[RMDB]
RNA sequence: GGGAACGACUCGAGUAGAGUCGAAAAGAUAUGGACAUACUUGCAGCAACAGCUCGGAAACGAGACAUGCUGUCAAGAUGUCCUAAGUCAAAACAAUCUAGUUUCACUUCGGUGAAACUAGAUUGAAGAGAUGAAGAAACUUCGGUUUCUUCAUCUCAAAAGAAACAACAACAACAAC
Reactivity to DMS in 0.01 (KOAc 150mM, MgCl2 10mM, bicine 150mM(pH8.5), 24C), signal-to-noise 4, nucleotides 027 to 126: g010a030u000a300u010g000g000a030c010a000u000a090c000u000u000g000c010a010g000c000a020a090c230a170g000c010u000c000g000g000a090a080a230c000g010a000g010a040c080a200u000g010c010u010g000u020c010a000a010g000a030u000g000u000c000c000u000a020a040g000u000c040a090a080a130a190c020a020a000u000c000u010a020g010u000u000u000c000a010c010u000u020c200g000g010u010g000a010a000a010c000u000a000g000a000u000u000g010a090a080
Reactivity to 2A3 in 0.01 (KOAc 150mM, MgCl2 10mM, bicine 150mM(pH8.5), 24C), signal-to-noise 4, nucleotides 027 to 126: g030a010u090a040u120g000g000a000c000a030u220a300c040u000u010g000c000a010g000c010a010a130c030a220g050c000u000c010g000g060a100a100a050c010g000a010g050a020c010a080u080g000c000u000g050u220c010a000a000g000a000u000g000u000c000c000u000a020a000g030u030c030a010a000a070a200c010a000a000u000c000u010a000g010u000u000u020c010a020c010u060u090c300g080g000u000g000a000a000a000c000u000a000g010a000u000u000g000a010a010